[RMDB]
RNA sequence: GGGAACGACUCGAGUAGAGUCGAAAAGAAAGAAAGGCUCUGUGGCACCUCAAGGUGAAUAUAGCUGCCCAUCGACGUAUCGCUGGAAACCGGUGGGCCGCUGUUCACCUAAAGUGACGCAAGGUAACGUUUAGGGAACGUUCGCGUUCCCUAAACGAAAAGAAACAACAACAACAAC
Reactivity to 2A3 in 0.01 (KOAc 150mM, MgCl2 10mM, bicine 150mM(pH8.5), 24C), signal-to-noise 4, nucleotides 027 to 126: g110a020a070a010g130a030a090a020g100g000c010u020c040u020g020u010g020g000c000a000c000c000u080c090a050a020g010g000u020g000a000a000u230a040u130a080g000c000u010g000c000c000c000a000u000c000g030a060c080g040u090a050u170c040g020c240u290g080g090a100a090a080c010c000g010g010u000g000g000g000c020c010g000c000u000g000u000u000c000a000c000c000u000a000a000a000g000u000g000a000c000g000c010a050a020g030g030u090a120a040
Reactivity to DMS in 0.01 (KOAc 150mM, MgCl2 10mM, bicine 150mM(pH8.5), 24C), signal-to-noise 2, nucleotides 027 to 126: g060a090a030a110g020a100a090a070g000g000c040u000c050u020g000u020g010g000c040a020c000c030u000c120a200a060g000g030u010g010a020a010u020a090u010a010g040c000u000g000c000c010c000a000u000c020g000a090c240g020u020a170u000c050g020c290u010g000g000a060a120a100c040c040g020g010u030g000g000g010c010c040g000c000u000g010u000u000c000a000c020c010u000a020a080a160g010u020g000a040c010g000c040a020a050g000g010u000a060a090
Structure probing data (2A3 and DMS) for a 177-nucleotide construct. Reactivities are given for positions 27 through 126. Source: RMDB libraries RFM100 and RFMREP, as collected in RNAgym. 2A3 adducts were read by reverse transcription with SuperScript II with manganese. For DMS the reverse transcriptase was MarathonRT.